[RMDB]
RNA sequence: GGGAACGACUCGAGUAGAGUCGAAAAGAUAUGGACAUUAAGCUUUUGACGCUCUGUAUUCGGAAACGAAUAUUGAGCGAUAAGCUUGGGUGUCCUAAGUCAAAAGGUCAAGGUUCGCCUUGACCAACAACGGUUGAUGGUUCGCCAUCAACCGUUGAAAAGAAACAACAACAACAAC
Reactivity to 2A3 in 0.01 (KOAc 150mM, MgCl2 10mM, bicine 150mM(pH8.5), 24C), signal-to-noise 2, nucleotides 027 to 126: g010a010u000a000u060g000g000a010c010a000u050u040a000a010g000c020u110u180u300u300g300a300c100g000c020u020c000u040g000u010a000u010u010c010g000g000a020a030a010c000g000a000a000u020a000u030u020g000a000g020c010g010a030u040a020a000g020c000u000u040g150g080g000u000g000u000c000c000u000a000a000g020u000c040a030a030a070a140g020g000u000c010a000a000g010g000u030u170c290g210c030c000u000u010g000a000c000c010a000a000
Reactivity to DMS in 0.01 (KOAc 150mM, MgCl2 10mM, bicine 150mM(pH8.5), 24C), signal-to-noise 1, nucleotides 027 to 126: g000a020u000a060u000g000g000a010c010a020u000u000a020a030g000c000u000u000u000u020g040a270c070g020c010u000c000u010g000u000a000u000u000c000g000g000a060a020a050c000g020a010a010u000a010u000u010g010a000g020c000g010a000u020a020a010g010c000u000u000g020g040g000u000g000u000c000c010u000a000a090g000u000c000a100a070a130a120g030g020u000c000a020a020g000g000u000u020c300g000c000c010u000u000g000a000c000c010a050a060